[RMDB]
RNA sequence: GGGAACGACUCGAGUAGAGUCGAAAACACAUGAUUCGUCAUGUGAAAAAAUCCUAAGUCGUCUAAGACAGGUAAAGACAUGAGGCGUAUCGGAAACGAUACCCUCAACAGCUUUACUCGAGACGAUAUGGAAAAAACGGUGACUUCGGUCACCGAAGGUAUAUGACGUAUUCGUACGUCAUAUACCAAAAGAAACAACAACAACAAC
Reactivity to 2A3 in 0.01 (KOAc 150mM, MgCl2 10mM, bicine 150mM(pH8.5), 24C), signal-to-noise 7, nucleotides 027 to 156: c000a000c000a000u000g010a020u060u130c170g070u020c110a010u000g000u020g040a060a000a010a010a010a010u050c030c000u050a130a040g020u000c010g000u000c020u060a190a110g090a140c080a100g040g040u010a000a000a010g020a060c070a140u090g000a000g020g020c230g040u000a000u000c010g010g040a050a030a040c010g000a010u000a000c010c000c000u000c000a000a000c010a000g000c000u000u010u000a020c030u040c050g030a010g000a000c000g000a000u010a050u090g030g060a070a100a010a030a010a010c020g010g000u010g000a000c010u040u090c280g110g000u000c000a000c000c000g000a010a030
Reactivity to DMS in 0.01 (KOAc 150mM, MgCl2 10mM, bicine 150mM(pH8.5), 24C), signal-to-noise 2, nucleotides 027 to 156: c000a020c000a030u010g000a030u000u000c300g000u000c000a020u000g020u000g010a000a010a050a150a060a120u010c000c010u010a080a230g010u000c000g010u000c000u010a110a150g030a160c300a080g000g000u000a010a030a000g010a070c060a300u000g000a030g010g000c120g030u020a000u000c000g000g010a140a090a180c010g040a020u000a000c010c000c000u000c000a020a040c040a130g000c010u010u010u000a000c000u010c010g020a050g020a040c040g020a040u000a300u010g010g010a000a010a120a050a020a050c000g010g030u000g000a010c020u000u000c280g030g010u000c000a030c000c000g010a030a010